An RNA of 170 nucleotides, treated with 2A3 and DMS and read out base by base.
RNA sequence: GGGAACGACUCGAGUAGAGUCGAAAACCACACUCCUUCCCCCCUGCGGGGCCCCCCCAUAAGAUGGCGAGAAAUCCACUCAUGGGUCCAUCGUCCAUCUCCUUCUUACCUUUUGGCCGGCAUGGUCGUACAGCAAGGUUCGCCUUGCUGAAAAGAAACAACAACAACAAC
Reactivity to 2A3 in 0.01 (KOAc 150mM, MgCl2 10mM, bicine 150mM(pH8.5), 24C), signal-to-noise 6, nucleotides 027 to 129: c000c000a030c010a010c030u170c010c020u080u140c010c000c000c010c000c000u080g040c160g010g000g020g040c000c000c000c000c000c000c000a030u040a010a030g000a010u030g020g000c000g000a000g020a020a060a020u050c020c010a060c130u300c130a300u150g000g000g020u000c020c020a050u010c010g040u010c020c000a010u020c020u030c000c000u060u060c000u060u090a100c000c020u040u070u070u090g040g010c020c000g050g060c100a090u140g040g000u000c000g000u160a140
Reactivity to DMS in 0.01 (KOAc 150mM, MgCl2 10mM, bicine 150mM(pH8.5), 24C), signal-to-noise 8, nucleotides 027 to 129: c030c020a170c210a180c090u030c070c000u040u000c010c000c010c030c020c150u020g040c150g040g000g010g050c040c010c020c020c000c000c040a110u020a030a020g040a050u030g030g040c030g020a000g000a180a240a020u000c020c040a090c220u080c210a140u040g010g020g040u040c060c040a220u000c010g020u060c050c000a000u020c000u020c140c020u050u000c060u030u050a030c070c030u010u020u020u010g020g010c050c010g010g050c060a000u040g000g000u000c100g000u070a090
Conditions: 150 mM KOAc, 10 mM MgCl2 and 150 mM bicine (pH 8.5), 24 C.